[RMDB]
RNA sequence: GGGAACGACUCGAGUAGAGUCGAAAAAGAACAUUGUACUGCAGUGGGGCGAGAUGCCCACCUCGGUGGCCUACAUCGGCACUGGACAAAUCAUGGGCUGGGGCAAUAAAGCAAUAGAGAUACGUUACGUGAUCAGGUAUUUCGAUACCUGAUCACGAAAAGAAACAACAACAACAAC
Reactivity to DMS in 0.01 (KOAc 150mM, MgCl2 10mM, bicine 150mM(pH8.5), 24C), signal-to-noise 1, nucleotides 027 to 126: a090g000a180a110c150a160u000u000g010u010a050c090u010g030c030a040g020u010g010g000g020g010c050g000a110g010a170u000g010c040c010c000a000c140c070u000c070g000g030u000g020g040c030c050u000a070c190a090u000c100g000g020c030a010c030u010g000g000a030c150a010a070a040u020c100a090u000g020g010g030c000u000g010g000g000g060c080a080a030u010a020a120a160g000c030a070a060u010a070g020a140g000a120u010a060c140g020u000u000a090
Reactivity to 2A3 in 0.01 (KOAc 150mM, MgCl2 10mM, bicine 150mM(pH8.5), 24C), signal-to-noise 1, nucleotides 027 to 126: a000g100a030a010c050a030u030u110g040u120a120c030u180g060c040a030g000u040g040g110g000g000c030g040a090g120a130u270g070c040c000c000a110c010c010u050c030g080g000u000g000g010c020c020u110a060c080a170u060c000g000g030c000a010c060u010g000g030a030c070a020a020a120u080c100a100u120g080g020g000c020u030g000g000g070g000c040a020a000u200a210a120a000g070c030a150a070u100a050g070a010g020a020u100a150c060g120u170u170a010